[RMDB]
RNA sequence: GGGAACGACUCGAGUAGAGUCGAAAAACUAGUCACUGGGCGAAUUAUUUCAAUCGGAGAAGCUAUGGUGGUUUACGGAUGAGAGGAACCACCAUCUGUUAUGCACCAGCCACUGACGAAGAAGUGCCGAAGCCAGCUGUUUCGACAGCUGGCUUCGAAAAGAAACAACAACAACAAC
Reactivity to 2A3 in 0.01 (KOAc 150mM, MgCl2 10mM, bicine 150mM(pH8.5), 24C), signal-to-noise 1, nucleotides 027 to 126: a000c000u000a070g000u000c000a000c020u050g020g160g000c000g230a090a090u180u000a000u000u130u210c020a020a040u170c050g000g000a080g110a080a000g000c000u060a000u000g000g000u000g020g000u000u140u000a240c010g170g300a300u300g080a260g000a120g050g020a000a000c000c000a030c000c000a000u000c000u000g000u000u000a060u160g000c200a200c110c000a000g040c000c000a000c000u000g000a000c000g000a000a000g010a060a000g140u080g120c090